[RMDB]
RNA sequence: GGGAACGACUCGAGUAGAGUCGAAAAGAUAUGGACGUAGAACUACUGCGAGGAGCCGAUGAGUCGGAAACGACGAGGCUCGUAGCAGCUACGUCCUAAGUCAAACGAAGCAGUUCGCUGCUUCGAAGUCUACGAGUGUCUUCGGACACUCGUAGACAAAAGAAACAACAACAACAAC
Reactivity to DMS in 0.01 (KOAc 150mM, MgCl2 10mM, bicine 150mM(pH8.5), 24C), signal-to-noise 1, nucleotides 027 to 126: g000a050u040a300u000g000g000a000c000g000u010a000g000a100a090c120u000a300c000u020g000c000g020a300g040g060a010g040c000c030g000a110u010g000a200g000u000c020g000g000a070a010a180c000g010a000c000g000a190g020g010c020u000c000g000u000a300g000c020a000g000c030u000a000c000g000u000c020c000u000a050a060g000u000c010a090a110a260c010g000a000a130g000c000a000g000u000u010c300g010c000u000g010c000u000u000c000g000a100a110
Reactivity to 2A3 in 0.01 (KOAc 150mM, MgCl2 10mM, bicine 150mM(pH8.5), 24C), signal-to-noise 1, nucleotides 027 to 126: g050a020u050a000u090g000g000a000c020g040u000a010g000a140a100c190u230a040c020u260g010c040g130a130g130g100a000g060c000c080g080a290u300g130a050g020u030c010g010g000a020a080a000c000g030a030c020g020a040g000g000c090u000c020g070u100a010g000c010a010g000c000u000a000c000g000u020c030c010u000a000a000g000u000c030a040a000a080c010g000a030a020g060c000a000g000u080u200c300g040c130u000g010c000u000u000c000g000a050a010

Structure probing data (DMS and 2A3) for a 177-nucleotide construct. It was measured as part of the RMDB library TTRDEL. The reactions ran in a buffer of 150 mM KOAc, 10 mM MgCl2 and 150 mM bicine (pH 8.5), at 24 C. For 2A3 the reverse transcriptase was SuperScript II with manganese. The DMS profile rests on 590 reads.